Overview: Chemical mapping of a 207-nucleotide RNA with 2A3. The RNA was probed in 150 mM KOAc, 10 mM MgCl2 and 150 mM bicine (pH 8.5) at 24 C. Source: RMDB library OK3TST, as collected in RNAgym.
RNA sequence: GGGAACGACUCGAGUAGAGUCGAAAAUAAACUGUUUAAUAUGUAAUAAGUGUAAAUUCUGAUAGGUGUGGGAAGAAAAAUCUCAGAUUUUGUGGAGGUUCAGAGGAGAGGGAACUUAAGCUAACCCUGGUGUAGGGCUUCUUCAACUGGAGAUUGGCGCGUCUAAAGUAUUCGUACUUUAGACGCGAAAAGAAACAACAACAACAAC
Reactivity to 2A3 in 0.01 (KOAc 150mM, MgCl2 10mM, bicine 150mM(pH8.5), 24C), signal-to-noise 2, nucleotides 027 to 156: u100a010a030a020c000u000g040u020u080u110a260a190u250a080u120g000u000a020a110u060a300a020g010u050g020u060a070a230a160u200u040c070u080g060a080u060a080g000g090u100g000u080g050g030g010a090a030g090a010a120a030a030a070u040c060u010c070a060g050a130u030u100u130u300g030u010g030g020a000g000g020u010u030c040a020g030a030g060g020a040g020a030g030g000g000a030a010c010u040u050a070a010g000c030u030a030a020c000c000c010u040g000g020u090g070u080a020g010g030g000c020u020u030c000u040u040c020a080a120c020u080g060g020a010g010a030u110u090g030g000
The 2A3 profile rests on 847 reads.